[RMDB]
RNA sequence: GGGAACGACUCGAGUAGAGUCGAAAAAGGUUACGGUCUACGAACGCGAUGACCGCAUUGGCGGCCUGCUCAUGUACGGUAUCCCCAAUAUGAAACUGGACAAGGCCAUCGUGGACCGGCGGGUCAACUACACUUAUCAUUUCGAUGAUAAGUGUAGAAAAGAAACAACAACAACAAC
Reactivity to 2A3 in 0.01 (KOAc 150mM, MgCl2 10mM, bicine 150mM(pH8.5), 24C), signal-to-noise 9, nucleotides 027 to 126: a000g150g020u130u070a030c010g000g000u000c010u020a020c030g040a200a040c080g020c050g100a080u160g110a080c050c020g000c040a060u040u170g180g010c030g000g010c010c010u020g010c020u020c050a070u130g030u070a050c080g010g050u060a130u130c030c010c000c010a040a030u130a070u200g140a150a070a030c060u050g010g010a020c030a090a070g060g000c010c010a030u020c020g000u020g000g010a010c000c010g000g000c010g020g010g020u020c010a020a020
Reactivity to DMS in 0.01 (KOAc 150mM, MgCl2 10mM, bicine 150mM(pH8.5), 24C), signal-to-noise 9, nucleotides 027 to 126: a090g020g010u010u010a090c020g020g010u000c010u000a040c020g010a040a120c180g030c110g010a100u010g010a050c060c030g020c030a180u010u010g030g020c030g010g000c010c010u000g010c040u000c050a070u000g010u000a040c060g010g010u000a100u010c050c070c040c100a080a090u010a080u000g000a060a080a050c040u000g000g000a040c040a060a140g010g000c020c060a110u000c020g020u000g000g000a030c010c010g010g010c070g000g000g010u000c070a080a190
Background:
Structure probing data (2A3 and DMS) for a 177-nucleotide construct. For 2A3 the reverse transcriptase was SuperScript II with manganese. Conditions: 150 mM KOAc, 10 mM MgCl2 and 150 mM bicine (pH 8.5), 24 C. DMS adducts were read by reverse transcription with MarathonRT. It was measured as part of the RMDB library OK2TRN. For 2A3, 34,185 sequencing reads were counted.